Chemical mapping of a 177-nucleotide RNA with DMS and 2A3. 2A3 adducts were read by reverse transcription with SuperScript II with manganese.
RNA sequence: GGGAACGACUCGAGUAGAGUCGAAAACAUUUACGCGAUAUUAAGCUUUCCAGCGUAUUACUCUGAUUGUCCAUCUUUGGACGCCGAGUGGCUCCUGUCCACUCUGCUUUGACGCCUCCCUGUUAUCUUUAGUCGAGACAUUCGUGUCUCGACUAAAAAAAGAAACAACAACAACAAC
Reactivity to DMS in 0.01 (KOAc 150mM, MgCl2 10mM, bicine 150mM(pH8.5), 24C), signal-to-noise 2, nucleotides 027 to 126: c110a120u010u030u010a030c020g020c030g000a140u000a070u040u050a070a190g000c060u000u000u000c020c060a160g000c090g030u000a030u030u010a050c040u010c050u010g000a100u020u020g000u010c000c010a110u010c190u020u050u000g020g000a020c010g000c120c070g000a010g010u000g010g000c010u010c170c170u000g000u040c010c030a010c040u000c000u000g000c000u030u010u020g000a040c060g010c020c020u000c030c020c000u000g010u010u010a010u000c090
Reactivity to 2A3 in 0.01 (KOAc 150mM, MgCl2 10mM, bicine 150mM(pH8.5), 24C), signal-to-noise 3, nucleotides 027 to 126: c050a000u110u100u050a020c080g000c000g010a030u060a050u230u200a190a070g020c030u120u020u060c060c020a030g000c000g000u030a060u000u150a030c040u030c030u040g050a210u070u170g010u000c000c040a110u050c060u250u110u100g000g000a010c000g000c030c030g020a020g030u030g010g010c000u020c080c010u030g030u030c000c000a000c000u040c010u020g000c010u020u010u210g020a000c000g010c010c000u020c000c010c010u000g070u100u100a100u070c010